[RMDB]
RNA sequence: GGGAACGACUCGAGUAGAGUCGAAAACCACCCUGACCUAGAGCAAAUGCUCGGGGCGCUCCCCUGGGCUUGAAACUUGCAGUAACAGGUGUGAACAUUCUAGUAGUAGUUUGAUGAUCAUGUAUGCACUCUGACCAAGUUUCGACUUGGUCAGAGUAAAAGAAACAACAACAACAAC
Reactivity to 2A3 in 0.01 (KOAc 150mM, MgCl2 10mM, bicine 150mM(pH8.5), 24C), signal-to-noise 2, nucleotides 027 to 126: c000c000a040c020c000c030u040g030a040c020c030u080a020g000a000g120c080a030a080a010u120g000c000u000c000g030g000g000g000c120g000c030u170c000c000c000c000u020g000g000g000c000u030u070g000a060a040a050c060u000u070g000c070a040g020u060a090a040c040a060g100g040u060g030u050g080a040a000c000a040u040u050c020u040a050g000u010a030g000u000a010g030u070u130u100g110a110u020g000a020u030c090a090u130g070u240a120u080g050c060
Reactivity to DMS in 0.01 (KOAc 150mM, MgCl2 10mM, bicine 150mM(pH8.5), 24C), signal-to-noise 2, nucleotides 027 to 126: c040c020a090c120c010c000u000g020a020c080c060u010a170g020a090g020c140a070a090a130u020g040c020u010c020g040g000g000g000c140g000c220u050c030c000c010c010u010g000g020g040c030u000u000g000a080a020a020c070u000u000g000c120a060g000u010a040a170c040a030g030g000u010g000u020g020a090a170c060a050u000u000c030u000a100g030u090a060g020u000a000g020u000u020u000g000a070u010g000a050u010c040a070u000g000u040a150u000g020c170
This 177-nucleotide RNA was probed chemically with 2A3 and DMS. Reactivities are given for positions 27 through 126.